[RMDB]
RNA sequence: GGGAACGACUCGAGUAGAGUCGAAAAUGACAAUCAGCAGCCCCGAAGCGAACUGGGAGGAGUUCUACAAGAAGAAGGACAUCGGGGACAUCCUCUGGCUGCACUACAAGAAGGCCAUGACCCUCCCGCAUCCGACACAUUUCGAUGUGUCGGAUGCAAAAGAAACAACAACAACAAC
Reactivity to 2A3 in 0.01 (KOAc 150mM, MgCl2 10mM, bicine 150mM(pH8.5), 24C), signal-to-noise 2, nucleotides 027 to 126: u180g070a020c090a140a080u290c160a050g020c030a040g000c000c000c000c010g050a060a050g020c020g090a100a050c040u110g030g000g000a010g000g000a060g000u090u000c000u010a030c080a030a140g250a140a020g010a010a020g130g050a000c010a030u010c020g000g000g000g000a000c000a020u030c000c020u010c000u010g000g040c000u000g000c140a010c050u070a060c050a120a040g080a040a040g120g020c000c000a030u200g020a050c030c000c030u030c020c030c010
Reactivity to DMS in 0.01 (KOAc 150mM, MgCl2 10mM, bicine 150mM(pH8.5), 24C), signal-to-noise 1, nucleotides 027 to 126: u000g060a120c140a100a050u010c210a230g000c030a040g000c000c000c100c010g000a170a010g020c110g030a060a020c110u030g050g000g040a010g000g000a160g000u030u000c000u000a060c190a000a010g000a120a080g000a100a020g010g070a100c300a000u000c030g000g000g000g090a070c120a210u000c000c000u000c010u080g000g010c000u000g000c040a200c260u130a050c180a030a130g000a050a180g000g000c020c000a070u000g010a030c020c000c060u000c000c000c030